[RMDB]
The data come from the RNA Mapping Database (RMDB), libraries RFM100 and RFMREP. The record gives the reactivity of an RNA of 177 nucleotides to 2A3 and DMS. 2A3 is a SHAPE reagent: it acylates the 2'-hydroxyl of flexible nucleotides of all four kinds. The reactions ran in a buffer of 150 mM KOAc, 10 mM MgCl2 and 150 mM bicine (pH 8.5), at 24 C. DMS adducts were read by reverse transcription with MarathonRT. 2A3 adducts were read by reverse transcription with SuperScript II with manganese.
RNA sequence: GGGAACGACUCGAGUAGAGUCGAAAAAUGCGAAUAUUCUCGCUGUUCUGAUUUUGUGAUAAUCAGGACAGGCUAAACAUUCGCUAUAGUACGACCAUGCAUGUGUCCCCAGACCUAGUUCUUUACCUACUGGAGUGAGGUUCGCCUCACUCCAGUAAAAAGAAACAACAACAACAAC
Reactivity to 2A3 in 0.01 (KOAc 150mM, MgCl2 10mM, bicine 150mM(pH8.5), 24C), signal-to-noise 3, nucleotides 027 to 126: a000u090g000c000g000a020a000u040a070u170u010c070u010c110g080c050u010g000u000u000c000u000g000a000u000u020u120u100g260u100g180a180u220a180a000u010c010a000g000g000a000c000a000g110g000c020u080a080a070a040c080a020u010u010c000g000c000u010a040u040a100g090u030a040c050g000a050c030c000a020u100g070c000a040u090g070u010g000u050c020c000c010c040a040g020a050c010c050u050a060g020u020u000c000u020u050u040a120c020c010
Reactivity to DMS in 0.01 (KOAc 150mM, MgCl2 10mM, bicine 150mM(pH8.5), 24C), signal-to-noise 2, nucleotides 027 to 126: a020u000g020c000g000a000a000u000a010u010u000c050u000c180g000c000u000g000u000u000c000u000g000a030u000u000u000u000g020u070g030a120u010a010a000u000c000a000g010g010a000c000a070g010g000c060u000a010a070a090c190a050u000u000c000g020c000u000a140u010a040g000u000a030c120g000a060c080c070a040u020g010c100a090u020g030u000g030u000c000c020c030c140a040g000a090c170c050u010a170g000u000u000c050u000u020u000a030c180c090